[RMDB]
RNA sequence: GGGAACGACUCGAGUAGAGUCGAAAAGAUAUGGAGCCAGAACUACUCGGAACUGGAGCGAAGAACAAUGUUAGCUCGGAAACGAGCUAACAUUGGGAGCUCCUAAGUACGAGCUGGCUCCUAAGUCCAUUACCUAGACCUUCGGGUCUAGGUAAUGAAAAGAAACAACAACAACAAC
Reactivity to DMS in 0.01 (KOAc 150mM, MgCl2 10mM, bicine 150mM(pH8.5), 24C), signal-to-noise 2, nucleotides 027 to 126: g010a020u010a220u000g010g030a020g000c000c010a030g010a050a050c060u010a300c020u010c010g020g000a160a160c300u020g000g040a010g090c010g000a120a200g050a180a170c000a000a010u000g020u010u000a000g000c000u000c000g000g010a100a050a150c010g000a000g000c000u020a000a020c000a000u000u000g000g010g010a170g000c010u000c000c000u000a010a000g000u000a140c020g040a020g000c020u000g010g010c000u000c000c020u000a000a050g000u000c010
Reactivity to 2A3 in 0.01 (KOAc 150mM, MgCl2 10mM, bicine 150mM(pH8.5), 24C), signal-to-noise 2, nucleotides 027 to 126: g020a030u110a060u210g020g010a030g020c000c000a010g000a110a020c260u300a050c040u300c010g040g020a050a010c030u030g040g030a000g000c060g280a300a250g030a290a090c010a010a000u020g010u020u000a010g000c010u070c020g030g000a100a090a020c000g000a000g060c000u000a010a000c010a010u000u000g000g000g000a050g000c000u030c000c020u010a010a000g010u040a010c000g000a010g040c000u000g000g000c000u020c000c000u000a020a010g000u000c010